Structure probing data (2A3 and DMS) for a 177-nucleotide construct. For 2A3 the reverse transcriptase was SuperScript II with manganese. Conditions: 150 mM KOAc, 10 mM MgCl2 and 150 mM bicine (pH 8.5), 24 C.
RNA sequence: GGGAACGACUCGAGUAGAGUCGAAAAGCACCUGGGUUCGCCCAGGUGCAAAGAUCAGUAGCAUGGAAGAUCAAAUCCGAUAGGAUGCUACAGGGAAACCAAAAAGCCAGUGCUUCGGCACUGGCAAGAGAUAAGGUGAGUUCGCUCACCUUAUCUCAAAAGAAACAACAACAACAAC
Reactivity to 2A3 in 0.01 (KOAc 150mM, MgCl2 10mM, bicine 150mM(pH8.5), 24C), signal-to-noise 1, nucleotides 027 to 126: g010c000a010c000c010u030g000g000g030u070u070c150g070c020c000c010a000g010g040u000g010c000a000a000a000g010a020u080c030a010g010u000a010g010c010a010u090g050g180a100a060g050a160u090c080a060a210a090u000c040c010g030a060u090a120g200g000a010u010g010c000u000a010c000a000g070g030g030a030a020a050c040c010a050a030a010a000a080g000c020c000a010g010u000g000c000u040u150c230g080g000c010a000c000u000g000g030c010a000a000
Reactivity to DMS in 0.01 (KOAc 150mM, MgCl2 10mM, bicine 150mM(pH8.5), 24C), signal-to-noise 2, nucleotides 027 to 126: g000c010a010c000c030u000g000g000g020u000u010c300g010c010c000c000a000g000g040u000g010c010a000a040a040g000a160u010c050a080g020u000a010g000c000a040u000g000g020a080a070g000a170u000c200a100a110a240u000c030c040g000a110u010a130g000g000a020u000g000c000u000a010c000a150g020g000g000a100a090a070c020c010a020a060a150a120a140g000c010c000a010g010u000g010c000u000u000c210g010g040c000a000c000u000g030g000c010a000a010